Structure probing data (DMS) for a 177-nucleotide construct. The reactions ran in a buffer of 150 mM KOAc, 10 mM MgCl2 and 150 mM bicine (pH 8.5), at 24 C. For DMS, 1,119 sequencing reads were counted. Values cover nucleotides 27 to 126.
[RMDB]
RNA sequence: GGGAACGACUCGAGUAGAGUCGAAAACAGCGGCUACAACAUGAACCCUGUCUUCAUAUACGUGGUGCCGAAGCCCUGCCCCCGCGAGCGUAUCGUGCUCCCAGGUUUGUGCGCUCGGCCGGUACGCGACCUACUAGGCAUUCGUGCCUAGUAGGUCAAAAGAAACAACAACAACAAC
Reactivity to DMS in 0.01 (KOAc 150mM, MgCl2 10mM, bicine 150mM(pH8.5), 24C), signal-to-noise 1, nucleotides 027 to 126: c140a060g000c080g050g000c020u000a060c080a110a070c140a080u000g010a070a090c060c010c040u000g010u010c080u010u000c060a050u000a100u000a120c210g000u000g020g020u000g000c010c010g000a130a160g000c050c030c040u000g020c000c010c000c020c030g010c120g010a100g030c000g010u000a090u000c050g010u000g000c030u000c020c030c020a140g010g010u010u010u000g010u020g000c000g000c070u000c040g030g000c000c010g010g000u010a030c080g030c090
The data come from the RNA Mapping Database (RMDB), library OK2TRN.